[RMDB]
RNA sequence: GGGAACGACUCGAGUAGAGUCGAAAAGGGCUGCCUUGCUAUUUCGGUAAACUGGGUUGCAGCAUUGAAAAACAAGCAUGACAGGAUUAUCCAAAGUAGCAAGCAUUUUUGGGUCAUUUACCAUAGCUUUAUCAAUGUGGGCAGUUGAUGGCAUGGCCUAAUAAACCGCAUUCGUGCGGUUUAUUAGAAAAGAAACAACAACAACAAC
Reactivity to 2A3 in 0.01 (KOAc 150mM, MgCl2 10mM, bicine 150mM(pH8.5), 24C), signal-to-noise 6, nucleotides 027 to 156: g060g010g010c050u050g030c030c020u020u010g000c000u010a030u030u040u040c060g010g010u040a030a020a040c020u030g150g130g070u070u040g010c030a040g020c050a090u090u170g100a080a060a020a010a020c040a040a030g010c020a020u060g210a180c010a030g040g020a110u110u080a030u120c010c010a030a000a010g010u010a000g010c010a030a010g020c010a030u080u060u060u110u110g030g000g000u020c040a050u070u080u150a060c020c010a010u020a030g010c010u030u120u120a050u070c020a030a060u070g010u070g060g030g000c010a030g000u050u050g020a030u040g030g000c040a020u030g010g010c000
Reactivity to DMS in 0.01 (KOAc 150mM, MgCl2 10mM, bicine 150mM(pH8.5), 24C), signal-to-noise 4, nucleotides 027 to 156: g010g020g000c030u000g000c070c090u000u010g030c000u010a050u000u000u010c020g030g030u000a070a120a170c020u000g010g020g020u010u000g040c010a200g030c060a110u000u000g000a040a070a110a110a110c060a090a180g000c020a050u000g020a180c020a110g000g010a130u000u000a100u000c010c010a020a030a040g050u000a040g020c010a050a080g020c060a100u000u000u000u000u000g020g010g020u000c040a070u000u000u010a060c020c020a060u000a090g010c020u000u000u010a100u000c040a050a060u010g020u000g020g020g020c050a160g010u000u000g010a070u000g020g020c000a070u010g000g000c070
Conditions: 150 mM KOAc, 10 mM MgCl2 and 150 mM bicine (pH 8.5), 24 C. Chemical mapping of a 207-nucleotide RNA with 2A3 and DMS.